[RMDB]
Conditions: 150 mM KOAc, 10 mM MgCl2 and 150 mM bicine (pH 8.5), 24 C. Chemical mapping of a 177-nucleotide RNA with DMS and 2A3. Source: RMDB library RFM100, as collected in RNAgym. The DMS profile rests on 1,594 reads.

RNA sequence: GGGAACGACUCGAGUAGAGUCGAAAAAGCAGUUACGACUGCAAUCUGGCCGGCCAAAAGCCAGCCACGCCGCGGAUUAAUAGUUGCAUCCGUUUUAUUGGCCAGGAUGUAAUGGUUAGGUAAUAAAAUAGCUCUUUUGGUUCGCCAAAAGAGCUAUAAAAGAAACAACAACAACAAC
Reactivity to DMS in 0.01 (KOAc 150mM, MgCl2 10mM, bicine 150mM(pH8.5), 24C), signal-to-noise 1, nucleotides 027 to 126: a110g030c040a040g000u020u020a090c220g040a060c020u000g000c000a170a010u000c050u010g000g000c000c040g040g000c030c090a000a050a150a300g000c000c000a030g000c010c010a010c030g020c050c000g000c070g000g030a070u000u020a060a040u030a120g010u000u020g000c200a030u000c000c020g030u010u050u000u000a210u000u010g000g030c020c010a140g020g000a040u050g000u010a040a160u000g000g000u000u060a080g000g000u030a060a050u030a030a010a050
Reactivity to 2A3 in 0.01 (KOAc 150mM, MgCl2 10mM, bicine 150mM(pH8.5), 24C), signal-to-noise 2, nucleotides 027 to 126: a000g020c040a030g000u070u120a140c200g040a040c050u000g000c020a000a050u120c050u030g000g000c000c000g000g010c030c000a100a220a000a000g000c010c000a000g000c020c000a060c010g000c030c010g040c060g000g000a010u050u170a070a090u200a120g080u040u020g050c020a010u000c000c000g000u020u010u130u210a170u050u100g030g000c040c000a050g010g010a000u100g020u050a050a020u040g020g020u020u010a080g060g020u080a140a110u090a110a160a000

Overview: For DMS the reverse transcriptase was MarathonRT.